RNA sequence: GGGAACGACUCGAGUAGAGUCGAAAAGUCACCGCAACCACUGAUGGCCACAAACGGGUGACGAGCCUUAAACUGAACGGCAGAUUCCUUGAGCGCAUCCAUUAGUGGGAAAUCACCGGCGCCGUUGCGCUGAGGUACGGUUCGCCGUACCUCAGCGAAAAGAAACAACAACAACAAC
Reactivity to DMS in 0.01 (KOAc 150mM, MgCl2 10mM, bicine 150mM(pH8.5), 24C), signal-to-noise 3, nucleotides 027 to 126: g010u010c000a050c000c010g010c200a200a200c030c000a010c050u000g000a040u000g000g020c270c110a160c170a030a120a080c220g030g020g010u000g000a020c060g020a200g000c010c010u010u010a060a050a100c130u020g030a070a090c210g010g000c010a100g000a180u010u000c010c000u030u000g000a080g030c100g000c080a080u020c020c010a020u000u000a020g000u000g020g000g010a050a090a030u000c080a100c090c050g000g000c040g040c020c130g020u020u000g020
Reactivity to 2A3 in 0.01 (KOAc 150mM, MgCl2 10mM, bicine 150mM(pH8.5), 24C), signal-to-noise 2, nucleotides 027 to 126: g000u000c000a020c060c000g060c040a090a080c000c020a000c040u030g020a030u040g040g000c100c010a100c060a050a120a060c140g100g040g010u040g040a030c000g010a030g000c000c020u100u130a180a300a120c160u150g090a070a010c040g000g000c000a030g020a160u060u010c010c020u050u070g070a050g010c090g000c070a030u020c020c000a020u040u040a030g000u040g000g050g030a020a090a020u180c110a080c070c000g080g020c020g000c030c020g060u080u140g040